[RMDB]
RNA sequence: GGGAACGACUCGAGUAGAGUCGAAAAAUACAAGGGGAGGUUUCGGCCAAAUGUUGUAUGCACAAAGCGUGAGGAAGGUAGCACUUAGACACUCACGAGUAGCGGUUCGGCAGUAGUGCUAAAAUGAGACAGUACGAAAAGUUCGCUUUUCGUACAACUUAGUGCUAAACUUCGGUUUAGCACUAAGAAAAGAAACAACAACAACAAC
Reactivity to DMS in 0.01 (KOAc 150mM, MgCl2 10mM, bicine 150mM(pH8.5), 24C), signal-to-noise 2, nucleotides 027 to 156: a120u010a080c050a050a110g000g000g010g040a130g050g030u000u010u000c050g040g050c010c030a030a100a130u000g020u000u000g020u000a080u000g000c000a090c060a090a090a140g020c030g030u000g000a080g000g030a120a070g000g010u010a060g000c030a080c070u000u010a120g030a170c020a050c000u000c000a040c040g000a190g020u000a090g000c070g020g000u000u000c050g000g000c030a100g020u000a050g020u010g010c050u000a040a050a060a120u000g000a180g000a060c080a100g030u000a000c000g000a010a000a040a030g040u000u000c300g060c030u000u000u000u000c010g030u000a000c000a020a070
Reactivity to 2A3 in 0.01 (KOAc 150mM, MgCl2 10mM, bicine 150mM(pH8.5), 24C), signal-to-noise 2, nucleotides 027 to 156: a000u090a040c060a080a040g040g020g000g010a060g030g050u040u050u080c070g060g000c010c010a070a100a050u060g020u060u040g020u020a070u060g100c050a040c050a070a140a030g050c020g010u020g000a000g070g020a110a000g000g030u050a020g020c000a010c070u080u070a030g060a080c010a010c060u020c000a020c010g010a020g040u090a020g030c040g020g040u100u040c040g010g000c000a030g030u120a010g010u000g010c040u050a040a040a100a000u120g000a020g000a020c070a090g000u000a000c000g000a000a000a010a010g000u010u040c170g020c120u000u000u000u020c010g000u000a000c000a010a000